[RMDB]
An RNA of 177 nucleotides, treated with 2A3 and DMS and read out base by base. The RNA was probed in 150 mM KOAc, 10 mM MgCl2 and 150 mM bicine (pH 8.5) at 24 C.
RNA sequence: GGGAACGACUCGAGUAGAGUCGAAAAGAGACGAGGCAUCCCGACAACGCUACAAAGAGCGUCUUGAGGACAUCGAAAGCAAGAUUUCGCAAGGUGCGAAACAACGCAAACGGGCUGCAUAAAUAAAACUAAUGCCACGUUUCGACGUGGCAUUAGUAAAAGAAACAACAACAACAAC
Reactivity to 2A3 in 0.01 (KOAc 150mM, MgCl2 10mM, bicine 150mM(pH8.5), 24C), signal-to-noise 3, nucleotides 027 to 126: g100a020g050a050c160g010a050g040g040c000a020u040c000c010c000g030a020c040a040a010c000g060c030u100a050c070a100a250a030g140a030g020c000g000u020c030u010u050g010a030g110g020a000c030a110u030c030g030a180a040a000g050c010a040a140g060a170u000u050u000c000g010c040a080a040g150g000u050g010c000g020a040a010a020c050a000a000c090g000c060a090a000a030c050g000g020g030c000u030g000c050a030u110a180a190a050u210a000a100a010
Reactivity to DMS in 0.01 (KOAc 150mM, MgCl2 10mM, bicine 150mM(pH8.5), 24C), signal-to-noise 2, nucleotides 027 to 126: g000a110g000a080c140g020a140g030g010c030a000u030c000c000c040g060a020c170a090a070c150g020c010u030a090c300a050a120a020g000a140g000c030g090u000c010u000u050g040a100g000g030a070c150a050u000c000g000a190a080a060g020c190a200a180g000a070u000u000u000c020g040c020a110a010g000g000u000g030c000g000a130a020a080c090a130a040c100g040c050a020a080a110c000g000g000g020c040u000g000c030a170u030a100a030a080u000a050a070a050